This 207-nucleotide RNA was probed chemically with DMS and 2A3. Conditions: 150 mM KOAc, 10 mM MgCl2 and 150 mM bicine (pH 8.5), 24 C. Reactivities are given for positions 27 through 156. Source: RMDB library OK3TST, as collected in RNAgym. For DMS, 4,549 sequencing reads were counted. The 2A3 profile rests on 5,333 reads. DMS adducts were read by reverse transcription with MarathonRT. In probing experiments dimethyl sulfate is read out at A N1 and C N3, which are open when not base-paired.
RNA sequence: GGGAACGACUCGAGUAGAGUCGAAAACGCAUGCGAGAGCAUGCGGCUAAGCUUCGGCUUAGUAAGAGCAAGUUAGGAUUCUAGGCUCCCCGGCGUGUCUCGAACCAUGCCGGGCCAAACCCAUAGGGCUGGCGGUCCCUGUGCGGUCGAAAUUCAAACUGCUAAAAUGAUUCGUCAUUUUAGCAGUAAAAGAAACAACAACAACAAC
Reactivity to DMS in 0.01 (KOAc 150mM, MgCl2 10mM, bicine 150mM(pH8.5), 24C), signal-to-noise 2, nucleotides 027 to 156: c000g030c010a020u000g040c020g020a300g000a300g010c000a010u010g010c000g020g010c020u000a010a000g010c000u000u010c300g070g020c000u010u000a020g030u000a080a110g010a090g020c060a100a120g020u000u010a090g000g010a110u000u000c050u000a220g020g010c040u000c090c010c040c040g020g010c020g070u000g060u010c060u020c190g000a180a190c140c010a010u010g000c020c010g000g030g010c020c060a040a040a060c000c010c010a110u000a070g000g010g030c000u000g000g020c040g010g010u000c010c020c010u010g030u000g000c100g050g010u010c010g030a060a050a060u000u000c040a080a100
Reactivity to 2A3 in 0.01 (KOAc 150mM, MgCl2 10mM, bicine 150mM(pH8.5), 24C), signal-to-noise 4, nucleotides 027 to 156: c000g010c000a000u000g010c020g000a050g010a000g040c010a000u000g010c010g000g000c000u000a000a000g000c010u030u140c300g110g000c000u000u000a000g010u030a080a020g010a000g010c020a060a000g000u060u050a030g030g020a050u040u000c020u050a030g030g000c000u010c010c020c000c000g000g000c010g030u010g020u010c100u060c260g070a050a050c040c000a000u010g000c000c000g000g000g020c010c000a030a020a000c000c000c010a000u010a000g000g020g020c020u040g080g080c040g060g030u080c000c010c000u000g000u010g010c130g000g030u060c100g070a030a010a010u040u030c030a120a070